[RMDB]
RNA sequence: GGGAACGACUCGAGUAGAGUCGAAAAGAAAGAGUUCGCUCUUUCAAAAAUCCUAAGUCUCCUAAGACAGGCGUAGACAUGAUCCAUAUCGGAAACGAUAUGAGAUCAACAGCUACGCUCGAGGAGAUAUGGAAAAAAAUGUCUGUUCGCAGACAAACUCGUGUCUAAUAUUCGUAUUAGACACGAGAAAAGAAACAACAACAACAAC
Reactivity to DMS in 0.01 (KOAc 150mM, MgCl2 10mM, bicine 150mM(pH8.5), 24C), signal-to-noise 1, nucleotides 027 to 156: g020a060a040a020g020a060g020u000u000c300g090c010u000c000u010u020u020c000a000a140a140a240a110u000c000c000u000a000a150g030u000c000u000c030c000u020a080a090g010a220c300a050g000g000c000g000u000a010g020a050c110a300u030g000a010u020c010c010a130u000a020u010c000g040g010a120a060a230c000g000a010u000a000u000g000a210g000a000u000c000a040a050c170a140g000c010u000a000c000g020c010u010c030g010a030g000g000a030g020a010u000a100u000g030g010a000a020a060a110a090a110a150u000g000u000c000u000g060u000u000c270g050c000a070g000a060c010a020a020a090
Reactivity to 2A3 in 0.01 (KOAc 150mM, MgCl2 10mM, bicine 150mM(pH8.5), 24C), signal-to-noise 2, nucleotides 027 to 156: g000a000a000a000g010a000g020u050u110c180g100c070u010c010u020u020u030c040a030a040a000a000a000u040c030c000u030a120a030g020u000c000u010c000c010u100a190a070g070a120c090a100g050g030c000g000u000a000g050a100c030a090u050g000a000u000c010c000a000u000a000u000c000g020g040a050a060a050c030g000a000u000a000u000g140a180g000a030u000c000a010a000c020a000g010c000u000a000c000g000c000u010c000g010a000g000g000a000g000a000u030a060u040g000g030a040a040a020a010a070a020a130u150g010u050c010u010g040u040u110c270g040c090a000g010a000c000a040a040a070
Structure probing data (DMS and 2A3) for a 207-nucleotide construct. The DMS profile rests on 2,018 reads. The reactions ran in a buffer of 150 mM KOAc, 10 mM MgCl2 and 150 mM bicine (pH 8.5), at 24 C. 2A3 adducts were read by reverse transcription with SuperScript II with manganese. Source: RMDB library RNAMAK, as collected in RNAgym.